The record gives the reactivity of an RNA of 177 nucleotides to 2A3 and DMS. As a SHAPE reagent, 2A3 marks flexible, mostly unpaired nucleotides at the ribose 2'-OH. The RNA was probed in 150 mM KOAc, 10 mM MgCl2 and 150 mM bicine (pH 8.5) at 24 C. For 2A3 the reverse transcriptase was SuperScript II with manganese.
[RMDB]
RNA sequence: GGGAACGACUCGAGUAGAGUCGAAAAGCAGUCGCAAGAGCGGAGGGUAAUUAGGACAGGAUCCUAAUAAACCUGCGAGUGAGACGUUAAAAAAACUUCCACUGGCAAAACGCAGGCCAACAGUAACGAUAUCUAACUUGUUCGCAAGUUAGAUAUCAAAAGAAACAACAACAACAAC
Reactivity to 2A3 in 0.01 (KOAc 150mM, MgCl2 10mM, bicine 150mM(pH8.5), 24C), signal-to-noise 4, nucleotides 027 to 126: g020c020a020g060u090c040g000c080a080a070g020a030g110c020g010g050a050g020g010g000u030a080a020u010u020a010g000g010a000c050a040g170g080a120u010c000c000u000a020a010u050a070a110a020c000c020u030g010c010g050a000g000u010g010a210g000a030c010g000u000u020a100a250a040a010a000a000a000c000u020u000c010c000a010c030u040g120g000c000a060a080a030a030c020g000c020a030g000g040c010c000a050a050c030a030g050u040a040a010c090
Reactivity to DMS in 0.01 (KOAc 150mM, MgCl2 10mM, bicine 150mM(pH8.5), 24C), signal-to-noise 5, nucleotides 027 to 126: g020c080a070g010u000c110g010c060a100a110g000a120g010c050g000g010a150g000g010g010u000a100a050u000u000a020g010g010a020c040a230g000g020a300u000c000c000u000a010a010u000a010a100a190c020c010u000g020c000g000a030g040u000g000a150g010a010c080g010u000u000a000a000a060a100a070a050a020c020u000u000c010c000a040c030u000g010g010c090a070a040a050a130c050g010c030a040g000g010c040c050a070a070c140a050g010u030a080a100c170